[RMDB]
RNA sequence: GGGAACGACUCGAGUAGAGUCGAAAAGUUAUGCUCUGGCUGCCUAAUGGCGGUGCGGGAAACCCACUCUAAAGUCCUUAGGGUUAGCCCCUUAAGGCGGGGUUCGGAGGCACCUGGCAACAGAAGCUGAAACUGUGCACAUUCGUGUGCACAGUAAGAUCGGUACCUGAUUCGUCAGGUACCGAUCAAAAGAAACAACAACAACAAC
Reactivity to 2A3 in 0.01 (KOAc 150mM, MgCl2 10mM, bicine 150mM(pH8.5), 24C), signal-to-noise 1, nucleotides 027 to 156: g030u010u020a050u160g010c030u000c010u010g100g000c030u030g000c030c040u250a300a190u160g200g080c170g020g010u020g030c000g060g000g080a030a030a060c030c000c000a070c070u260c070u240a170a110a020g150u130c010c000u000u000a000g000g010g010u040u050a060g020c000c000c060c000u020u000a000a000g040g000c000g000g020g000g000u020u010c050g010g070a070g090g090c010a000c000c050u000g010g000c000a010a010c000a000g010a130a020g010c000u000g010a110a000a000c000u000g000u000g010c010a000c000a010u040u090c240g120u070g000u000g000c000a000c000a000g000u020a000a020